[RMDB]
RNA sequence: GGGAACGACUCGAGUAGAGUCGAAAAACUACACGCGCUUCUCCUCUAAGAGCGAUGUGUGGGCAUACGGUGUGCUGAUGUGGGAGAUCUUCACUUGCGGCAAGAUGCCAUACGGUCGCCUAAAGAAUAUAACUCACAAUUUCGAUUGUGAGUUAUAAAAAGAAACAACAACAACAAC
Reactivity to DMS in 0.01 (KOAc 150mM, MgCl2 10mM, bicine 150mM(pH8.5), 24C), signal-to-noise 7, nucleotides 027 to 126: a120c030u000a010c020a030c000g010c020g010c010u000u010c040u000c150c140u000c190u010a120a080g010a030g000c010g010a030u000g030u000g010u000g000g000g010c120a090u010a090c150g000g020u000g010u010g010c020u000g010a080u000g020u000g010g000g010a150g000a040u000c020u010u000c060a090c100u000u010g010c140g000g010c110a040a040g000a050u000g000c010c010a030u000a040c040g000g010u000c040g010c010c010u010a070a080a110g000a100a140
Reactivity to 2A3 in 0.01 (KOAc 150mM, MgCl2 10mM, bicine 150mM(pH8.5), 24C), signal-to-noise 5, nucleotides 027 to 126: a010c010u020a010c010a010c000g040c000g010c030u190u070c020u110c060c040u140c070u170a090a030g010a010g030c060g050a230u070g020u000g000u010g040g010g020c030a060u110a060c060g040g030u070g040u070g040c020u010g000a300u030g050u030g010g020g020a230g040a090u020c000u020u030c020a040c060u090u220g100c060g060g010c010a010a000g010a040u040g030c010c000a000u020a030c030g020g010u010c020g020c000c000u080a130a100a020g060a080a010
The record gives the reactivity of an RNA of 177 nucleotides to DMS and 2A3. For 2A3, 5,293 sequencing reads were counted. Source: RMDB library OK2TRN, as collected in RNAgym. The reactions ran in a buffer of 150 mM KOAc, 10 mM MgCl2 and 150 mM bicine (pH 8.5), at 24 C. Values are in units of 0.01, from 0 to 300, in steps of 10.